[RMDB]
RNA sequence: GGGAACGACUCGAGUAGAGUCGAAAAAAAAAGAUAUGGACGUUGGAUUAAUGGACUGGCGUUUGACGUGAAUCGGAAACGAUUCACCGAGCCAGCUCCAAAGCUUAUCAACGUCCUAAGUCAAAAAGACCUAAAAAAAGUUCGCUUUUUUUAGGUCAAAAGAAACAACAACAACAAC
Reactivity to DMS in 0.01 (KOAc 150mM, MgCl2 10mM, bicine 150mM(pH8.5), 24C), signal-to-noise 2, nucleotides 027 to 126: a060a010a040a060a050g000a040u010a300u010g020g000a000c010g030u000u010g000g000a060u000u030a070a170u000g000g000a040c030u000g000g000c000g000u040u020u000g000a150c300g000u000g010a000a000u000c000g010g020a120a060a180c000g000a000u000u000c000a020c000c000g000a120g000c000c000a030g000c260u000c030c000a010a030a140g000c250u030u010a030u010c000a030a000c000g000u000c000c000u010a010a140g000u030c010a060a090a040a110a120
This 177-nucleotide RNA was probed chemically with DMS. For DMS, 1,157 sequencing reads were counted. Reactivities are given for positions 27 through 126.